Notes:
The record gives the reactivity of an RNA of 177 nucleotides to 2A3 and DMS.
RNA sequence: GGGAACGACUCGAGUAGAGUCGAAAAGAUAUGGAAAUACGAAGAGCAACAGCUACAGGUCGGAAACGACCUAAGUAGACAUGCUUGUAUGUAUUUCCUAAGUCAAACUGGCUGUUCGCAGCCAGAACGUUACGUUUGAGUUCGCUCAAACGUAACGAAAAGAAACAACAACAACAAC
Reactivity to 2A3 in 0.01 (KOAc 150mM, MgCl2 10mM, bicine 150mM(pH8.5), 24C), signal-to-noise 3, nucleotides 027 to 126: g020a000u050a030u110g010g020a000a000a020u030a020c060g010a140a110g000a020g040c050a020a140c050a220g020c010u010a010c010a000g000g010u000c000g020g020a070a070a050c000g000a000c010c010u020a070a030g000u000a000g050a100c040a080u230g000c010u020u070g070u070a060u300g010u000a000u000u010u000c000c000u000a080a010g050u000c050a060a070a100c010u000g000g000c020u000g070u110u090c300g030c220a000g030c040c000a000g010a020a000
Reactivity to DMS in 0.01 (KOAc 150mM, MgCl2 10mM, bicine 150mM(pH8.5), 24C), signal-to-noise 3, nucleotides 027 to 126: g000a080u010a300u000g010g000a020a020a000u000a000c000g020a220a300g000a010g000c020a010a080c300a260g000c000u000a000c000a050g020g000u000c000g010g000a100a070a170c020g010a030c000c000u000a010a110g020u000a000g000a040c120a200u010g000c000u000u000g010u000a160u020g000u000a020u000u010u000c000c010u000a010a100g010u010c050a120a150a150c020u000g000g010c020u020g000u000u000c200g030c020a010g010c010c000a000g010a060a090

2A3 adducts were read by reverse transcription with SuperScript II with manganese. DMS adducts were read by reverse transcription with MarathonRT. The reactions ran in a buffer of 150 mM KOAc, 10 mM MgCl2 and 150 mM bicine (pH 8.5), at 24 C. The DMS profile rests on 2,469 reads. For 2A3, 5,896 sequencing reads were counted.